[RMDB]
RNA sequence: GGGAACGACUCGAGUAGAGUCGAAAAGACAUUUGGUUGGCUCCAAGUAUUUGCUAUUGUAAAUAGUGCCGCAAUAAACAUACGUGUGCAUGUGUCUUUAUAGUAGCAUGAUUUAUAAUCCUCUGGGUAUAUACCCAGUAAUGGGAUGGCUGGCUCAAUUAAAUGACUAGUUCGCUAGUCAUUUAAUAAAAGAAACAACAACAACAAC
Reactivity to 2A3 in 0.01 (KOAc 150mM, MgCl2 10mM, bicine 150mM(pH8.5), 24C), signal-to-noise 4, nucleotides 027 to 156: g050a020c030a050u040u060u160g020g000u030u030g020g020c030u040c030c040a100a040g060u070a140u070u050u040g000c010u000a010u030u030g020u010a050a040a010u070a090g010u020g010c020c010g000c020a040a070u170a210a190a030c090a070u190a090c080g020u030g100u130g000c000a010u050g060u030g030u140c000u030u040u010a030u020a030g010u000a000g000c000a000u020g030a040u070u200u110a120u060a100a050u020c010c010u030c010u020g020g000g050u050a170u040a030u080a300c000c000c000a000g000u010a060a060u080g010g010g020a020u040g020g000c030u030g010g000c010u010c090a020
Reactivity to DMS in 0.01 (KOAc 150mM, MgCl2 10mM, bicine 150mM(pH8.5), 24C), signal-to-noise 4, nucleotides 027 to 156: g010a060c050a070u000u000u010g020g030u000u000g020g010c040u040c040c030a080a200g020u000a060u000u000u000g010c020u000a050u000u010g020u000a020a030a070u000a100g010u000g000c000c030g040c020a110a080u000a080a080a120c110a130u000a040c080g030u010g030u010g040c060a050u010g000u000g020u010c100u000u000u000a030u000a110g040u000a020g010c010a030u000g010a120u000u000u010a060u000a100a100u000c030c010u000c020u000g010g030g040u000a150u010a160u000a080c010c000c000a020g000u000a030a070u010g010g020g010a080u000g020g000c040u000g020g010c040u010c040a110